[RMDB]
RNA sequence: GGGAACGACUCGAGUAGAGUCGAAAAGACUGAGUCUUCUUGGAAUGUGAGGACUCAGAACCUUCUCACAUUCCAUUUGCCAUGAGGGGGUAGUAUAUUUAAUGGCAAAUAUUGAUUAGGUAUACAGGCAGAGGUGACUAUUCGUAGUCAUCUCUGCAAAAGAAACAACAACAACAAC
Reactivity to DMS in 0.01 (KOAc 150mM, MgCl2 10mM, bicine 150mM(pH8.5), 24C), signal-to-noise 9, nucleotides 027 to 126: g000a280c000u000g000a030g000u000c000u010u010c110u010u000g010g000a030a000u000g010u000g010a010g000g000a010c010u000c010a040g000a050a070c090c060u000u000c020u000c020a010c020a010u000u000c000c010a110u000u000u000g000c000c010a050u000g010a170g010g000g000g000g020u000a140g010u000a040u000a030u000u000u000a150a040u000g000g010c030a020a030a050u000a120u010u010g000a130u010u000a040g010g010u000a040u000a040c080a160g000
Reactivity to 2A3 in 0.01 (KOAc 150mM, MgCl2 10mM, bicine 150mM(pH8.5), 24C), signal-to-noise 5, nucleotides 027 to 126: g020a000c010u010g010a000g010u000c030u110u040c040u150u180g040g030a030a010u040g000u010g010a010g000g000a000c010u010c030a000g000a000a010c000c000u040u050c010u010c000a010c000a020u010u010c010c000a020u040u040u050g000c020c010a050u090g090a190g030g050g010g020g030u070a030g100u030a110u010a030u130u120u080a090a010u010g010g000c000a010a030a020u140a040u040u100g080a080u090u070a030g030g030u050a040u030a100c030a040g100
An RNA of 177 nucleotides, treated with DMS and 2A3 and read out base by base. The 2A3 profile rests on 10,870 reads. The RNA was probed in 150 mM KOAc, 10 mM MgCl2 and 150 mM bicine (pH 8.5) at 24 C.